Structure probing data (DMS and 2A3) for a 207-nucleotide construct.
[RMDB]
RNA sequence: GGGAACGACUCGAGUAGAGUCGAAAAAUUCUGUACAUAAAAGUCGAAAGUAUUGCUAUUGUUAAGGUUGCGCUUGCCUAUUUAGGCAUACUUCUCAGGAUGGCGCGUUGCAGUCCAACAAGAUCCAAAAACAACGGCCACUUCGGUGGCCGUUGAAGUAUUUAUGUACGUUCGCGUACAUAAAUACAAAAGAAACAACAACAACAAC
Reactivity to DMS in 0.01 (KOAc 150mM, MgCl2 10mM, bicine 150mM(pH8.5), 24C), signal-to-noise 1, nucleotides 027 to 156: a140u000u000c040u000g070u000a150c010a120u020a110a090a090a180g010u000c060g030a120a070a140g000u030a020u000u000g010c020u010a090u020u000g010u000u020a070a040g030g020u010u010g000c070g030c100u000u020g020c000c010u010a230u000u030u010a020g020g000c050a040u020a000c030u000u000c030u000c090a230g000g000a000u010g010g030c050g050c120g000u000u010g020c000a120g010u000c040c030a030a050c080a040a120g020a090u010c020c050a020a040a070a100a180c000a030a020c000g020g050c000c000a030c000u000u020c300g020g050u000g010g030c010c010g000u000u010g000a010a090
Reactivity to 2A3 in 0.01 (KOAc 150mM, MgCl2 10mM, bicine 150mM(pH8.5), 24C), signal-to-noise 2, nucleotides 027 to 156: a000u060u070c060u020g020u040a060c000a050u210a130a100a050a010g030u060c030g040a020a030a010g020u020a040u060u160g000c000u000a000u120u090g060u070u120a050a060g000g010u030u100g000c040g020c080u040u060g000c000c000u060a120u120u160u070a000g000g030c000a000u000a000c010u020u000c050u000c060a030g110g000a030u040g040g050c010g000c020g000u000u050g050c020a010g020u000c000c000a000a000c020a040a090g050a190u070c080c000a040a030a000a040a030c010a000a000c010g020g010c000c000a030c070u050u090c160g060g010u020g000g140c000c010g000u000u000g010a010a000

The RNA was probed in 150 mM KOAc, 10 mM MgCl2 and 150 mM bicine (pH 8.5) at 24 C.
The data come from the RNA Mapping Database (RMDB), library M2RFPK.